[RMDB]
RNA sequence: GGGAACGACUCGAGUAGAGUCGAAAACGGGCGGAAUGAUGGUUAACCAUUUGGCUUUUCAGGUGUCGACGGCCAAACUGCCGUUCGGUGGUGUCGGCGCAUCGGGCAUGGGUGCCUACCACGGCCGAGGUCUUCCUGUGUUCGCACAGGAAGACCUAAAAGAAACAACAACAACAAC
Reactivity to DMS in 0.01 (KOAc 150mM, MgCl2 10mM, bicine 150mM(pH8.5), 24C), signal-to-noise 1, nucleotides 027 to 126: c100g020g010g000c110g030g000a070a120u000g000a030u010g000g080u040u000a040a090c010c000a000u000u010u000g010g090c010u000u000u040u020c110a180g020g000u040g020u050c110g030a000c080g040g040c010c180a040a040a140c050u000g000c000c010g030u010u130c020g010g070u000g000g000u010g000u020c160g000g000c000g030c130a030u000c120g050g000g010c040a000u000g030g000g060u000g040c080c010u010a090c080c140a110c000g000g000c030c050g120
Reactivity to 2A3 in 0.01 (KOAc 150mM, MgCl2 10mM, bicine 150mM(pH8.5), 24C), signal-to-noise 2, nucleotides 027 to 126: c020g000g000g000c020g010g120a150a090u170g060a080u060g010g030u240u260a250a270c040c000a030u050u020u160g000g040c000u200u000u060u160c100a090g100g050u070g040u190c030g040a020c000g000g000c000c010a140a090a020c030u110g000c000c010g000u120u110c030g030g000u050g000g020u040g090u130c080g000g000c000g000c000a000u050c010g000g040g050c030a050u070g020g010g020u020g000c000c000u010a030c000c010a000c040g000g000c000c010g000